This 207-nucleotide RNA was probed chemically with 2A3. For 2A3, 542 sequencing reads were counted. The reactions ran in a buffer of 150 mM KOAc, 10 mM MgCl2 and 150 mM bicine (pH 8.5), at 24 C. Values cover nucleotides 27 to 156.
RNA sequence: GGGAACGACUCGAGUAGAGUCGAAAAGUAAAAUAGCAGCUUAUUCUAGCUGGGAUUAUUACAAAGGUCAUAGGAGGGAGAGUAAAGAGGGAAGUAUACAUUUGACUUACAAACAGCCUUCUGUGUAUAACUGAUAUGCUUUUCCUACAAUUUUGGACAUUUUACUGGCGUUCGCGCCAGUAAAAUGAAAAGAAACAACAACAACAAC
Reactivity to 2A3 in 0.01 (KOAc 150mM, MgCl2 10mM, bicine 150mM(pH8.5), 24C), signal-to-noise 2, nucleotides 027 to 156: g030u010a000a100a080a060u030a010g060c000a000g000c030u090u160a130u270u250c180u240a000g010c010u010g050g000g080a080u030u080a060u110u050a050c040a040a110a020g050g020u030c030a020u070a050g040g030a010g010g020g000a010g010a000g020u040a020a150a000g090a030g000g040g000a060a110g040u030a030u030a030c010a030u070u000u100g040a040c010u030u090a080c030a030a220a010c020a020g030c010c010u020u050c040u080g010u010g020u040a010u020a200a020c000u010g040a080u030a000u180g020c000u020u040u040u030c000c000u010a080c040a080a130u000u090u070u210g010g030a010